[RMDB]
Source: RMDB library TTRDES, as collected in RNAgym. Chemical mapping of a 177-nucleotide RNA with 2A3 and DMS. DMS (dimethyl sulfate) methylates the pairing face of unpaired adenines and cytosines. Reactivities are rounded to 0.1 and cut off at 0 and 3.

RNA sequence: GGGAACGACUCGAGUAGAGUCGAAAAGAUAUGGACAUGGUAGGGAGUCGGUAUUCGGAAACGAAUACCCGACGAGGAUCUACGACCAUGUCCUAAGUCAAAGGUUUCGGCGUUCGCGCCGAAACCACUUGAUGAAGGAGUUCGCUCCUUCAUCAAGAAAAGAAACAACAACAACAAC
Reactivity to 2A3 in 0.01 (KOAc 150mM, MgCl2 10mM, bicine 150mM(pH8.5), 24C), signal-to-noise 3, nucleotides 027 to 126: g000a000u020a010u040g000g000a010c000a010u020g010g070u040a160g170g080g140a140g000u000c010g000g020u000a010u000u000c000g010g000a020a020a010c000g000a010a000u000a030c100c090c040g000a000c000g010a030g080g170a170u140c050u090a020c020g080a030c000c020a000u020g020u010c000c000u000a000a000g010u000c030a090a040a250g000g000u020u010u000c000g020g000c030g060u070u140c300g020c020g000c160c000g000a000a000a010c000c000a000
Reactivity to DMS in 0.01 (KOAc 150mM, MgCl2 10mM, bicine 150mM(pH8.5), 24C), signal-to-noise 3, nucleotides 027 to 126: g010a010u000a030u010g000g000a010c000a000u000g000g000u000a050g010g010g000a010g030u000c010g000g010u000a000u010u000c010g020g000a000a020a020c010g020a020a020u000a010c250c080c050g030a000c010g020a190g030g010a120u010c070u010a190c110g000a040c020c010a020u000g000u000c000c000u000a000a060g000u000c000a110a120a160g010g010u000u000u000c010g000g020c020g040u000u000c300g020c020g020c000c000g000a000a000a000c000c000a010